[RMDB]
RNA sequence: GGGAACGACUCGAGUAGAGUCGAAAAUGGGUCUGAGAAACGUAUAAAGUUUUAUGAAUAUCAGAGUGCCAGACGGCGAAGAAAUAGCCUCAUCCCUGAGCAGUUUUUAUAGGGAGGAGGGCAGCGGACAUUGUGGACGGUUCGCCGUCCACAAUGUAAAAGAAACAACAACAACAAC
Reactivity to DMS in 0.01 (KOAc 150mM, MgCl2 10mM, bicine 150mM(pH8.5), 24C), signal-to-noise 1, nucleotides 027 to 126: u000g000g000g020u000c010u010g000a050g000a050a170a080c070g010u010a020u000a060a080a240g000u000u000u000u010a060u000g010a100a070u010a140u000c040a050g000a070g020u010g000c070c060a070g000a080c110g010g000c020g000a080a080g010a020a030a080u020a100g000c020c000u000c010a040u000c010c000c000u010g010a120g040c270a060g020u000u000u010u040u000a090u010a080g030g000g000a050g010g000a070g000g000g030c010a050g000c070g010g000